[RMDB]
RNA sequence: GGGAACGACUCGAGUAGAGUCGAAAAGUGGCUGGCUCAGAAGCUGGGGAACACACUCCAUCACCCUCUGCACAGCCUCAGGGGAGGAAAGGCUGGAACAGCUCUAAGAAGCCUCGCUGCAGAUAUUGGAGGGCCAGCAAGGCGUGGCCGCCAGAGCCAUACCCGAACACUUCGGUGUUCGGGUAUGAAAAGAAACAACAACAACAAC
Reactivity to 2A3 in 0.01 (KOAc 150mM, MgCl2 10mM, bicine 150mM(pH8.5), 24C), signal-to-noise 1, nucleotides 027 to 156: g100u080g020g050c060u030g080g000c030u020c090a070g060a240a030g050c020u060g000g020g020g120a200a000c090a010c010a100c170u000c000c000a030u100c070a090c030c030c000u030c000u000g040c020a020c010a040g010c000c000u010c010a040g030g060g030g000a110g000g100a080a160a000g030g000c010u010g000g000a030a030c050a060g010c040u000c020u090a200a150g060a100a010g030c050c010u040c100g070c040u070g020c000a000g010a100u070a100u120u100g000g000a010g000g000g000c000c000a000g000c000a010a020g060g010c040g000u060g000g010c010c000g000c000c010a000g000a000g060c030